[RMDB]
RNA sequence: GGGAACGACUCGAGUAGAGUCGAAAAGCUGCAUGGGGACACCAUCUACAGUGGGGCCGACCGCUAUCGCCUGCACACAGCUGCUGGUGGCACCGUGCACCUGGAGAUCGGCCUGCUGCUCCGCAACGGGAGGUAAUGAAUUCGUUCAUUACCUCCCAAAAGAAACAACAACAACAAC
Reactivity to 2A3 in 0.01 (KOAc 150mM, MgCl2 10mM, bicine 150mM(pH8.5), 24C), signal-to-noise 2, nucleotides 027 to 126: g040c020u030g000c020a050u090g000g000g010g090a020c030a020c040c000a020u040c020u060a030c020a040g020u030g040g050g000g000c060c050g030a060c010c070g010c080u060a060u170c030g030c020c030u160g050c030a030c000a000c010a070g040c070u050g000c020u030g010g020u040g010g030c030a020c030c030g020u030g010c010a020c020c000u000g030g010a050g030a090u060c050g040g040c000c010u040g000c000u010g030c010u020c010c050g070c030a040a080c060
Reactivity to DMS in 0.01 (KOAc 150mM, MgCl2 10mM, bicine 150mM(pH8.5), 24C), signal-to-noise 4, nucleotides 027 to 126: g000c120u000g010c040a040u010g010g000g010g000a090c080a110c030c020a040u000c040u000a080c070a050g030u000g010g010g010g010c040c030g030a050c070c140g020c130u000a130u000c110g010c050c030u000g000c060a080c070a090c120a100g020c120u000g000c060u000g000g000u000g000g030c050a080c060c070g000u000g000c020a040c140c040u010g010g000a080g020a070u010c060g010g010c040c040u000g020c030u000g000c020u000c010c020g020c160a080a130c170

Source: RMDB library OK2TST, as collected in RNAgym. The record gives the reactivity of an RNA of 177 nucleotides to 2A3 and DMS.